[RMDB]
RNA sequence: GGGAACGACUCGAGUAGAGUCGAAAAUUACGUCAAACACAAAAAGCUCCAAAAACUCCAUACGUGAUUCUACCAGCAUCGGAUACUUUUGAAAAAUUUCGAAAAACUAGUAGAGUAUCUGUUGAUACGAUAAUUUACCUUUCGAGGUAAAUUAUCGAAAAGAAACAACAACAACAAC
Reactivity to DMS in 0.01 (KOAc 150mM, MgCl2 10mM, bicine 150mM(pH8.5), 24C), signal-to-noise 2, nucleotides 027 to 126: u000u000a040c080g000u000c070a070a100a170c120a030c090a080a070a070a210a130g010c040u010c020c050a030a120a090a140a090c040u010c020c020a040u010a010c070g010u010g000a070u000u000c130u000a100c020c080a100g000c040a050u000c020g020g000a030u000a010c040u000u000u000u010g020a030a100a090a160a070u000u010u000c090g010a120a060a080a090a020c040u010a070g000u000a070g000a010g000u000a000u000c020u000g010u010u000g010a110u000a080
Reactivity to 2A3 in 0.01 (KOAc 150mM, MgCl2 10mM, bicine 150mM(pH8.5), 24C), signal-to-noise 1, nucleotides 027 to 126: u020u020a030c020g010u010c040a060a260a010c080a030c030a050a200a090a000a000g030c040u080c030c020a000a100a030a110a200c050u030c070c000a010u020a060c010g010u060g010a050u060u040c020u050a090c000c000a030g010c000a020u050c020g040g000a020u070a070c050u010u080u050u080g040a020a060a030a060a110u080u210u090c020g020a150a120a030a090a110c090u110a050g150u130a000g070a020g020u000a000u030c000u020g110u050u010g050a100u080a110